[RMDB]
RNA sequence: GGGAACGACUCGAGUAGAGUCGAAAAAGCGAGGAAAGCCUGGUCCUGUCCACUCUGGAAUCUGUCUAGGGAACCCAUUGUUUUAUAACCAUCUCAGCAAAGUUGUCUGUUCCAUGUUGUUCCUGCUGGGAGAGACUGAGCGUGGGGCCCUAGAAAACGUAUAUUUAUCAUUCGUGAUAAAUAUACGAAAAGAAACAACAACAACAAC
Reactivity to 2A3 in 0.01 (KOAc 150mM, MgCl2 10mM, bicine 150mM(pH8.5), 24C), signal-to-noise 2, nucleotides 027 to 156: a000g050c010g030a020g010g020a140a030a010g030c020c020u020g030g020u060c030c000u040g050u040c020c000a030c040u080c050u060g050g070a040a090u070c070u070g110u000c020u010a000g000g080g060a230a220c000c000c000a020u110u290g050u060u080u040u040a120u050a080a020c020c010a100u030c000u010c020a020g000c040a020a130a240g020u070u100g070u080c120u070g010u090u000c060c040a080u110g010u030u010g020u020u040c000c010u030g020c020u000g010g020g000a010g000a000g010a010c080u110g010a000g060c010g010u010g000g010g040g030c000c010c010u010a000g010a000a000a010a000
Reactivity to DMS in 0.01 (KOAc 150mM, MgCl2 10mM, bicine 150mM(pH8.5), 24C), signal-to-noise 2, nucleotides 027 to 156: a090g010c060g010a060g020g010a090a080a150g020c000c050u000g030g010u000c010c020u000g000u000c030c040a090c060u010c050u000g000g000a100a090u000c050u000g010u010c000u000a030g000g020g010a060a050c000c020c020a150u010u010g040u000u000u000u020a120u010a090a100c020c010a160u000c010u010c000a030g020c000a060a070a170g030u000u000g000u000c070u000g000u010u000c020c020a140u000g010u000u000g010u000u000c020c010u000g030c000u010g030g000g010a040g010a170g020a110c110u010g000a040g010c040g010u010g000g000g010g010c000c000c000u010a030g000a010a020a040a140
The data come from the RNA Mapping Database (RMDB), library OK3TST. The record gives the reactivity of an RNA of 207 nucleotides to 2A3 and DMS. For DMS, 4,880 sequencing reads were counted. DMS adducts were read by reverse transcription with MarathonRT. The 2A3 profile rests on 872 reads.